Structure probing data (DMS and 2A3) for a 177-nucleotide construct. For DMS the reverse transcriptase was MarathonRT. The RNA was probed in 150 mM KOAc, 10 mM MgCl2 and 150 mM bicine (pH 8.5) at 24 C.
RNA sequence: GGGAACGACUCGAGUAGAGUCGAAAACUAUUGUGGCUCUGAUUUUAUUGACAUUGUCAGGCGGUUAGCAGUAUCACUGUUCCAGCCUAUUACUUAUUUCCAAUUGACUACCUCAUUGGUCUUGGGUGUAGUUGAUUAGGUUCGCCUAAUCAACUACAAAAGAAACAACAACAACAAC
Reactivity to DMS in 0.01 (KOAc 150mM, MgCl2 10mM, bicine 150mM(pH8.5), 24C), signal-to-noise 2, nucleotides 027 to 126: c060u010a100u000u000g020u010g000g010c030u010c040u010g010a040u000u000u000u000a090u000u040g010a070c070a190u010u010g010u000c060a040g000g000c110g000g000u000u010a070g010c050a010g020u020a140u020c180a040c050u000g000u030u010c070c040a110g010c030c020u000a030u010u000a070c080u010u000a050u000u000u010c020c000a040a070u010u000g020a010c050u010a050c100c110u000c060a060u000u010g000g020u000c030u030u000g000g000g000u000
Reactivity to 2A3 in 0.01 (KOAc 150mM, MgCl2 10mM, bicine 150mM(pH8.5), 24C), signal-to-noise 3, nucleotides 027 to 126: c020u040a050u120u130g060u050g020g000c010u000c010u070g030a060u040u030u050u170a090u090u140g030a030c040a070u070u070g040u070c010a000g000g020c000g010g040u050u130a020g000c010a000g010u040a050u300c100a000c030u000g000u040u010c010c000a030g000c010c010u060a080u020u100a050c030u090u090a050u090u070u030c000c000a020a060u050u070g000a010c020u040a090c040c040u110c030a080u020u110g000g000u010c010u010u040g020g000g000u070